[RMDB]
RNA sequence: GGGAACGACUCGAGUAGAGUCGAAAAGAUCGGAAACAGCAGCAGGUGAGUCCGCCUUAUGUGAAGGAUCGGCUGAAACACGAGGAAAUACUGAGCCAACGCAAGACGGUAUCCGAACAGUAGCAACAAAACGCUUACGUGUUCGCACGUAAGCGAAUCUACUCCCAAGGUUCGCCUUGGGAGUAGAAAAAGAAACAACAACAACAAC
Reactivity to DMS in 0.01 (KOAc 150mM, MgCl2 10mM, bicine 150mM(pH8.5), 24C), signal-to-noise 1, nucleotides 027 to 156: g010a060u010c040g020g010a150a130a190c060a110g000c030a110g030c050a140g040g000u010g010a140g040u010c010c040g030c020c020u010u000a080u000g010u010g000a150a190g010g000a030u000c040g040g040c050u030g000a110a060a060c000a100c110g000a120g020g000a190a040a100u000a080c000u000g010a170g020c000c010a020a150c060g040c060a060a080g000a080c090g040g010u000a040u000c010c000g010a070a050c000a070g010u010a090g000c090a040a170c090a040a110a050a120c000g010c000u000u000a010c010g040u000g000u000u000c300g000c060a080c010g030u000a000a010g000c020g000a010a020
Reactivity to 2A3 in 0.01 (KOAc 150mM, MgCl2 10mM, bicine 150mM(pH8.5), 24C), signal-to-noise 2, nucleotides 027 to 156: g050a060u100c010g050g030a060a110a020c020a030g070c020a010g010c000a010g010g010u020g030a060g040u010c010c030g030c020c000u100u160a120u150g170u060g070a050a010g060g010a050u160c110g030g000c000u050g020a100a000a030c060a030c060g040a040g040g090a020a050a040u090a100c070u060g030a000g040c010c050a030a020c050g030c030a020a060g020a030c000g000g030u060a070u030c010c020g010a010a020c020a060g080u120a010g030c030a000a070c030a050a130a010a030c010g000c000u000u000a000c000g010u000g000u000u070c080g000c040a010c000g000u000a000a000g000c000g000a000a000
The record gives the reactivity of an RNA of 207 nucleotides to DMS and 2A3. High 2A3 reactivity points to a flexible backbone, as in loops and unpaired stretches. For 2A3, 1,458 sequencing reads were counted. For DMS, 2,004 sequencing reads were counted. It was measured as part of the RMDB library M2RFPK.